[RMDB]
RNA sequence: GGGAACGACUCGAGUAGAGUCGAAAAGAUCUGAGCACCCAGAUCAAUCAGUUCGCCAUCUCGGACAUCGGCGGACUCGAUGUCUUGGUUAACAUCCUGGAGUGCAGCGACACCAAGUGCUGUUUGGAGUGCUGCAGCAUUUCGAUGCUGCAGCACUAAAAGAAACAACAACAACAAC
Reactivity to 2A3 in 0.01 (KOAc 150mM, MgCl2 10mM, bicine 150mM(pH8.5), 24C), signal-to-noise 2, nucleotides 027 to 126: g050a030u030c040u040g000a000g060c040a000c000c050c000a000g000a000u020c040a000a160u030c000a000g000u020u000c020g020c070c000a090u080c120u150c140g060g070a040c000a040u090c010g030g010c050g000g090a060c040u030c000g010a000u010g000u020c030u050u070g020g020u020u090a070a000c000a080u020c000c000u100g050g020a170g000u090g100c000a010g070c000g020a030c010a020c100c020a060a070g000u060g090c070u000g130u050u130u060g050g020